[RMDB]
RNA sequence: GGGAACGACUCGAGUAGAGUCGAAAAGGGUUGCUCGCCGUCGCGGCGCUCGACGAUCUUGAUGACACCUUGCGGGCCGCGCUGCGGGCGCUAGCCGCCCACCCCGACGGCUUUGACGCUCUCGACCCCCUCCUGGAAAAUUCGUUUUCCAGGAGGGAAAAGAAACAACAACAACAAC
Reactivity to DMS in 0.01 (KOAc 150mM, MgCl2 10mM, bicine 150mM(pH8.5), 24C), signal-to-noise 2, nucleotides 027 to 126: g000g030g000u000u040g060c000u000c000g010c010c040g000u060c000g010c030g000g000c010g000c000u010c020g000a050c190g000a160u000c020u000u030g000a060u000g010a010c190a100c120c030u030u000g000c130g020g000g030c040c010g000c010g000c010u040g000c040g040g000g000c000g010c080u040a030g010c030c060g010c000c000c030a120c060c040c030c050g000a110c050g000g010c000u000u000u000g000a130c140g000c020u000c030u000c020g000a150c080c090
Reactivity to 2A3 in 0.01 (KOAc 150mM, MgCl2 10mM, bicine 150mM(pH8.5), 24C), signal-to-noise 6, nucleotides 027 to 126: g050g010g000u080u210g010c000u000c020g020c000c020g150u220c030g000c010g010g020c020g060c050u070c030g100a110c050g080a170u060c040u120u220g130a140u220g040a050c030a070c090c030u040u070g020c020g030g060g000c020c010g000c000g010c010u060g000c030g020g000g000c020g000c010u010a010g000c000c010g000c000c000c000a060c000c010c000c000g010a030c000g000g000c000u120u030u110g040a040c050g010c010u000c010u010c030g090a090c000c000